[RMDB]
RNA sequence: GGGAACGACUCGAGUAGAGUCGAAAAGGCCGGCCAACGACCGCGGGCCGCGCGGCCGGCGCUGGCUGUCGGGCAGCCUGGCCGAGAACAUCAAUGUGCUGCUGGAGUACGAUCCGGCCGAUGCCUACGUACUCCUGGAUUUCGAUCCAGGAGUACGAAAAGAAACAACAACAACAAC
Reactivity to DMS in 0.01 (KOAc 150mM, MgCl2 10mM, bicine 150mM(pH8.5), 24C), signal-to-noise 3, nucleotides 027 to 126: g000g010c010c000g010g020c080c040a130a130c050g000a060c010c050g020c040g010g000g020c050c080g010c050g030c020g020g010c030c030g010g000c170g010c030u000g000g000c010u000g000u010c110g000g000g010c080a030g000c060c000u010g030g000c020c020g000a070g000a130a120c100a100u020c120a070a100u000g000u010g000c020u000g000c090u000g010g010a110g020u000a070c090g020a130u000c020c020g010g010c000c020g020a070u000g010c010c010u010a130
Reactivity to 2A3 in 0.01 (KOAc 150mM, MgCl2 10mM, bicine 150mM(pH8.5), 24C), signal-to-noise 2, nucleotides 027 to 126: g000g010c010c010g010g020c020c040a120a040c030g030a010c000c010g020c060g040g020g060c100c000g000c020g030c000g040g030c090c000g060g000c080g040c020u020g140g070c010u030g140u220c060g020g000g050c010a000g020c030c020u070g020g020c000c020g020a050g010a050a070c080a060u190c050a050a170u190g050u100g040c060u010g000c020u060g060g130a070g050u100a050c070g050a080u000c020c000g000g000c010c000g010a050u090g020c000c000u040a080